[RMDB]
RNA sequence: GGGAACGACUCGAGUAGAGUCGAAAAAGCCUCCCUGAUGCUGUGUCCUCAGCAUCAGCUAAGGGCCCGACAGGCCACAGGCACACAAAUGAUUCUGGCUGAAGGAACCGGCCUGGCUCCGGCAUCCCUAGUUCCAGGCAUUAGGGGAAAUGAGGCAAUAUAUAUACCGAUUCGUCGGUAUAUAUAUAAAAGAAACAACAACAACAAC
Reactivity to DMS in 0.01 (KOAc 150mM, MgCl2 10mM, bicine 150mM(pH8.5), 24C), signal-to-noise 2, nucleotides 027 to 156: a100g010c010c010u000c020c140c000u000g000a040u000g020c000u010g000u000g000u020c150c100u020c010a020g000c000a050u000c030a010g000c050u000a070a170g000g030g010c010c000c050g020a170c140a150g000g000c000c000a070c070a120g000g030c020a110c040a180c060a090a080a090u010g010a150u010u000c020u010g010g030c030u020g020a150a130g010g010a230a070c030c040g030g010c050c020u010g010g000c040u000c000c020g020g000c050a120u020c030c010c000u000a050g010u010u000c010c030a120g000g030c050a040u010u010a060g000g020g000g020a070a070a060u000g000a040g020g050c040a160
Reactivity to 2A3 in 0.01 (KOAc 150mM, MgCl2 10mM, bicine 150mM(pH8.5), 24C), signal-to-noise 2, nucleotides 027 to 156: a000g050c010c010u030c010c020c010u000g000a010u000g000c010u020g040u060g070u250c030c060u050c010a000g010c000a010u030c000a000g000c010u050a090a110g050g000g000c010c020c000g150a040c070a060g070g000c020c030a100c080a080g050g000c050a010c020a000c020a070a160a060u190g030a150u240u010c020u060g040g050c030u050g060a090a030g040g020a020a050c070c010g000g020c050c150u100g030g040c040u020c040c000g030g000c030a080u050c020c000c000u020a020g030u120u060c020c030a030g000g070c020a040u030u130a060g000g010g010g040a000a050a090u140g000a020g040g000c010a010